[RMDB]
RNA sequence: GGGAACGACUCGAGUAGAGUCGAAAAGAAGAGAAUAAGCGCGGAUAUCUCUGUCGGUAGAGCUGCAGGACCGACACCUGCGAGUAGAGGGAUCAAGACCCUGUUCGCGCAAAGAUUGAAGUAGAAGAUCAGGUAAUAAUUUCGAUUAUUACCUGAUAAAAGAAACAACAACAACAAC
Reactivity to 2A3 in 0.01 (KOAc 150mM, MgCl2 10mM, bicine 150mM(pH8.5), 24C), signal-to-noise 8, nucleotides 027 to 126: g120a040a010g090a010g050a090a070u240a280a060g000c000g000c000g010g010a010u010a060u060c030u000c010u020g130u100c070g030g080u150a030g010a030g070c040u040g010c010a010g010g060a150c030c070g010a010c020a030c010c010u060g020c040g010a000g000u080a030g020a050g050g030g000a040u130c110a120a030g050a110c010c000c000u010g010u010u020c010g000c000g000c010a000a030a010g040a020u070u140g040a090a020g050u140a030g040a190a010g020
Reactivity to DMS in 0.01 (KOAc 150mM, MgCl2 10mM, bicine 150mM(pH8.5), 24C), signal-to-noise 8, nucleotides 027 to 126: g010a120a060g010a060g000a080a080u010a060a140g010c020g010c010g000g010a030u000a080u010c010u000c020u010g000u010c040g010g010u010a040g000a080g020c030u000g010c030a050g010g000a070c030c030g000a030c050a060c070c020u000g010c060g010a070g010u020a100g010a070g010g000g000a100u020c170a090a140g000a120c000c010c000u010g000u010u010c010g020c000g010c010a070a070a070g010a110u010u000g000a040a240g010u000a050g010a150a120g000

An RNA of 177 nucleotides, treated with 2A3 and DMS and read out base by base.
It was measured as part of the RMDB library OK1LIB.
The 2A3 profile rests on 8,116 reads.